[RMDB]
RNA sequence: GGGAACGACUCGAGUAGAGUCGAAAAAGGUCAAGGCUAUGGAAAGGUCAGGGAAGGGUGUCAGUGCGCCCGUCCUGCAGGGAGUCCAGAUCCGAGAGGUUAGGGCGGGACCUGGGGCGAGCUGGGCAAAGGUGCCGAUAUUCGUAUCGGCACCUUUAAAAGAAACAACAACAACAAC
Reactivity to DMS in 0.01 (KOAc 150mM, MgCl2 10mM, bicine 150mM(pH8.5), 24C), signal-to-noise 1, nucleotides 027 to 126: a110g010g010u010c070a050a160g020g020c070u000a070u010g020g010a070a050a130g010g010u020c070a140g000g000g030a070a130g000g000g000u010g010u000c110a020g030u020g000c050g010c020c000c010g000u000c010c000u010g010c040a100g010g000g000a130g010u000c030c080a100g020a100u010c040c030g000a250g010a080g010g000u000u010a060g010g020g020c050g010g000g010a090c020c050u000g020g000g020g020c100g000a060g000c080u020g000g010g000c190